This 177-nucleotide RNA was probed chemically with DMS and 2A3.
RNA sequence: GGGAACGACUCGAGUAGAGUCGAAAACAAGGCUCAGCCUGAAGGUCAGCAUCAUUUACACUGACCUGGAACUGUUCAAAUUUGUGCCCUGAUGCUGCAGCUAAAGAGCCAGUAACAUCUCUAAGAGUCAUUGCGGAAGGUUCGCCUUCCGCAAUGAAAAAGAAACAACAACAACAAC
Reactivity to DMS in 0.01 (KOAc 150mM, MgCl2 10mM, bicine 150mM(pH8.5), 24C), signal-to-noise 2, nucleotides 027 to 126: c040a100a130g000g000c020u010c010a070g020c120c080u020g000a070a020g000g000u010c000a010g000c130a130u030c190a150u000u000u030a140c140a120c000u000g000a030c040c030u000g010g000a090a150c120u000g000u000u000c050a060a030a150u020u000u000g030u000g010c070c090c100u000g000a050u010g000c050u010g000c050a110g010c030u030a060a080a100g000a050g010c010c020a060g010u010a060a040c080a020u000c010u000c040u000a100a120g000a170g000
Reactivity to 2A3 in 0.01 (KOAc 150mM, MgCl2 10mM, bicine 150mM(pH8.5), 24C), signal-to-noise 1, nucleotides 027 to 126: c010a030a070g020g010c020u000c030a020g090c050c030u080g010a070a000g000g020u060c000a000g040c020a050u040c020a040u140u190u170a000c030a010c030u020g000a000c000c000u000g000g020a060a010c030u040g060u120u070c030a070a040a190u050u070u070g040u020g020c000c000c000u000g020a030u050g000c000u000g010c000a050g000c000u100a130a220a030g120a050g010c000c000a000g040u040a000a020c010a100u020c020u000c020u090a160a040g060a020g200
About this RNA
Reactivities are given for positions 27 through 126. The RNA was probed in 150 mM KOAc, 10 mM MgCl2 and 150 mM bicine (pH 8.5) at 24 C. 2A3 adducts were read by reverse transcription with SuperScript II with manganese. Values are in units of 0.01, from 0 to 300, in steps of 10. For DMS, 1,388 sequencing reads were counted.